Chemical mapping of a 177-nucleotide RNA with DMS and 2A3. The DMS profile rests on 29,731 reads. Reactivities are given for positions 27 through 126. The 2A3 profile rests on 14,012 reads. Conditions: 150 mM KOAc, 10 mM MgCl2 and 150 mM bicine (pH 8.5), 24 C.
RNA sequence: GGGAACGACUCGAGUAGAGUCGAAAAUGGGUUCGUGUUUUGGCCCUUGGGGUUCGUGCCAUCGAGAAGGAGAUUCUGGCUCUGCUCCCACCUAAUAUUUUCUAUGGCGAUGCCUAUGAGGAGUCAGAUGACCUUAUGUAUUCGUACAUAAGGUCAUAAAAGAAACAACAACAACAAC
Reactivity to DMS in 0.01 (KOAc 150mM, MgCl2 10mM, bicine 150mM(pH8.5), 24C), signal-to-noise 9, nucleotides 027 to 126: u000g010g010g020u000u000c070g010u000g000u000u000u010u010g010g010c010c010c020u000u000g010g010g000g000u000u010c110g020u000g010c040c030a060u000c090g000a090g010a110a090g010g010a090g000a130u000u000c030u000g010g010c010u000c010u000g000c080u010c010c010c040a120c110c070u010a070a100u010a100u010u000u000u010c060u000a090u010g000g010c020g000a110u010g010c020c040u000a080u000g000a110g010g000a040g010u000c020a050g010
Reactivity to 2A3 in 0.01 (KOAc 150mM, MgCl2 10mM, bicine 150mM(pH8.5), 24C), signal-to-noise 7, nucleotides 027 to 126: u070g010g000g010u080u090c040g000u050g070u060u060u050u080g000g000c000c010c000u000u040g060g000g000g000u060u100c050g030u120g020c020c000a040u060c060g040a030g040a110a060g070g040a070g000a040u100u040c020u030g010g010c000u010c000u030g030c010u010c000c010c010a070c010c020u070a200a150u110a200u150u160u040u030c060u050a080u100g020g000c060g120a090u230g050c010c010u080a110u150g060a030g050g000a020g010u010c000a010g010
The data come from the RNA Mapping Database (RMDB), library OK2TRN.